[RMDB]
RNA sequence: GGGAACGACUCGAGUAGAGUCGAAAAACGAACUUAAAAUUGCAUCAUACGUCACGGUAGGUUUCGUCUUGCUGUGCGUACGUUGCACACCAAUUAUAGUGGAGCUUUUUGGUUAAGUACUUCCCCCGUCAACAAGAGGUUUCGACCUCUUGUUGACAAAAGAAACAACAACAACAAC
Reactivity to 2A3 in 0.01 (KOAc 150mM, MgCl2 10mM, bicine 150mM(pH8.5), 24C), signal-to-noise 9, nucleotides 027 to 126: a000c040g020a020a010c020u040u040a030a030a070a120u140u060g010c000a000u000c000a010u010a020c030g070u090c300a000c010g020g020u020a000g020g050u120u300u240c170g070u070c050u010u020g010c000u000g000u000g000c000g000u000a000c020g000u000u000g000c000a010c000a000c010c000a020a050u160u040a100u100a130g130u130g190g070a080g110c000u070u070u010u020u030g020g010u020u020a040a020g010u020a080c020u010u010c000c000c000c010c050
Reactivity to DMS in 0.01 (KOAc 150mM, MgCl2 10mM, bicine 150mM(pH8.5), 24C), signal-to-noise 2, nucleotides 027 to 126: a100c120g020a120a000c040u000u000a010a050a130a090u010u010g000c010a010u000c020a060u000a000c020g010u040c030a000c000g000g000u000a000g020g020u000u020u030c240g000u040c000u000u000g020c020u010g010u000g000c000g000u000a010c150g010u000u000g000c010a030c300a160c020c030a000a030u000u000a050u020a080g010u020g020g010a150g000c120u000u000u000u010u000g000g010u010u010a030a020g030u000a080c080u000u000c000c000c000c230c200